[RMDB]
RNA sequence: GGGAACGACUCGAGUAGAGUCGAAAAAAAUGUAACUCUUAGCUUAGGUUCUGAAUUUCAAACAUUAAACAAUGAACUGCGAUGCAAACUUUUAAGUCCUUUAAGUUCCACUUCACAAGGCAUUGCUUUAGAUUUGGGAGCUGGUUUGCAGUUAAAAACUAAAUCAGCUUUUCGAAGCUGAUUUAGUAAAAGAAACAACAACAACAAC
Reactivity to DMS in 0.01 (KOAc 150mM, MgCl2 10mM, bicine 150mM(pH8.5), 24C), signal-to-noise 1, nucleotides 027 to 156: a070a080a080u010g000u000a050a050c010u000c020u000u020a140g030c030u010u000a060g000g010u010u000c070u000g030a050a080u000u010u010c030a040a100a060c080a150u040u000a080a050a080c020a040a100u000g000a040a050c020u010g020c030g020a080u000g000c050a080a080a090c040u010u020u000u000a050a110g000u010c100c040u000u000u010a050a090g030u000u010c030c030a050c010u010u000c050a110c140a040a140g010g000c020a090u010u010g010c010u000u000u000a120g010a120u010u000u010g010g010g010a080g030c030u000g000g030u010u000u000g010c010a050g010u000u000a050a060a150a170
Reactivity to 2A3 in 0.01 (KOAc 150mM, MgCl2 10mM, bicine 150mM(pH8.5), 24C), signal-to-noise 2, nucleotides 027 to 156: a000a000a040u140g010u050a020a030c040u040c040u280u150a020g000c020u050u080a020g080g030u040u000c010u020g090a160a090u090u120u130c080a110a220a060c030a040u050u260a130a090a060c070a090a200u180g000a010a000c030u070g030c000g030a010u030g060c040a050a050a080c010u060u080u130u270a110a040g090u100c000c010u190u080u070a090a040g000u030u020c040c000a060c020u010u000c050a070c050a150a000g000g020c050a210u080u300g010c010u040u000u060a050g000a050u060u070u080g070g000g030a000g000c040u010g000g010u000u030u090g000c020a000g030u130u150a040a100a140a000
About this RNA: An RNA of 207 nucleotides, treated with DMS and 2A3 and read out base by base. For DMS, 2,091 sequencing reads were counted. The reactions ran in a buffer of 150 mM KOAc, 10 mM MgCl2 and 150 mM bicine (pH 8.5), at 24 C. Reactivities are given for positions 27 through 156.